[RMDB]
RNA sequence: GGGAACGACUCGAGUAGAGUCGAAAAAAUGCCGCCUCAGUUCCAAGCUCUUUCGUGGCACUGUAAACAGUCCUAUUGAGUUAGGGGCAGUCAACCACGUUGCGAAGCUAAAUUAUCUGGUUGAGAGUUACGAUUCCCUACUUCGGUAGGGAAUCAAGUCAAAGUCUGUAUUCGUACAGACUUUGACAAAAGAAACAACAACAACAAC
Reactivity to 2A3 in 0.01 (KOAc 150mM, MgCl2 10mM, bicine 150mM(pH8.5), 24C), signal-to-noise 3, nucleotides 027 to 156: a000a020u130g040c040c030g030c000c000u010c020a080g010u080u040c020c020a050a020g000c000u000c000u010u020u040c040g030u030g010g010c100a010c010u020g050u110a050a150a180c040a070g140u110c010c010u020a050u020u110g120a140g300u030u040a030g000g020g000g000c000a000g050u030c000a000a050c000c000a010c030g010u010u040g060c100g130a090a010g010c030u080a040a110a090u270u170a130u090c090u090g030g000u010u040g020a040g000a020g070u100u100a040c080g000a000u000u000c010c000c000u000a010c010u010u040c200g090g000u000a000g000g000g000a000a000u000c000a000a000
Reactivity to DMS in 0.01 (KOAc 150mM, MgCl2 10mM, bicine 150mM(pH8.5), 24C), signal-to-noise 1, nucleotides 027 to 156: a030a060u000g000c020c030g000c000c010u030c040a080g000u000u000c010c050a150a300g020c000u010c020u000u000u000c030g000u010g010g030c020a050c010u010g010u020a040a110a030c050a150g020u000c010c000u000a040u000u000g020a300g040u000u000a040g000g000g000g040c020a020g020u010c020a050a060c000c000a050c010g000u000u000g000c030g020a120a090g000c020u000a060a060a060u000u010a070u010c060u000g020g040u000u000g000a090g000a150g000u000u000a070c080g010a050u000u000c000c000c000u000a000c000u000u000c220g030g020u000a040g010g010g000a000a000u000c000a020a250
Structure probing data (2A3 and DMS) for a 207-nucleotide construct. 2A3 adducts were read by reverse transcription with SuperScript II with manganese. For DMS the reverse transcriptase was MarathonRT. Conditions: 150 mM KOAc, 10 mM MgCl2 and 150 mM bicine (pH 8.5), 24 C.